[RMDB]
The data come from the RNA Mapping Database (RMDB), library OK3TST.
Structure probing data (2A3) for a 207-nucleotide construct.
The RNA was probed in 150 mM KOAc, 10 mM MgCl2 and 150 mM bicine (pH 8.5) at 24 C.
RNA sequence: GGGAACGACUCGAGUAGAGUCGAAAAUAUUUUAGGCUCUGUGGGCUACAUAGUGCUUCUAUUCUAGUACAUAUUCUUUCUCUUUUUCUUAUUUUUAAUCAACCUGUAUAAACCAUUUUAGCUCUUAGUCCUUGUUUGCCAACUUCUACUUUAGAAACCUAUGAUCAGGAUUCGUCCUGAUCAUAGGAAAAGAAACAACAACAACAAC
Reactivity to 2A3 in 0.01 (KOAc 150mM, MgCl2 10mM, bicine 150mM(pH8.5), 24C), signal-to-noise 2, nucleotides 027 to 156: u040a010u040u110u060u100a020g000g000c010u000c000u010g060u010g020g040g040c030u070a040c040a040u080a010g030u000g050c000u000u020c010u070a110u080u030c020u040a010g020u040a030c010a040u110a160u110u040c000u030u080u010c050u060c000u050u090u150u120u030c060u130u170a300u200u100u100u060u140a040a120u070c010a010a040c010c000u040g040u080a040u070a100a120a070c010c040a010u020u020u030u090a000g000c000u000c010u040u040a070g010u040c000c000u020u070g010u070u040u100g000c020c010a060a040c010u070u020c040u120a100c010u090u300u210a060g040a170a060a010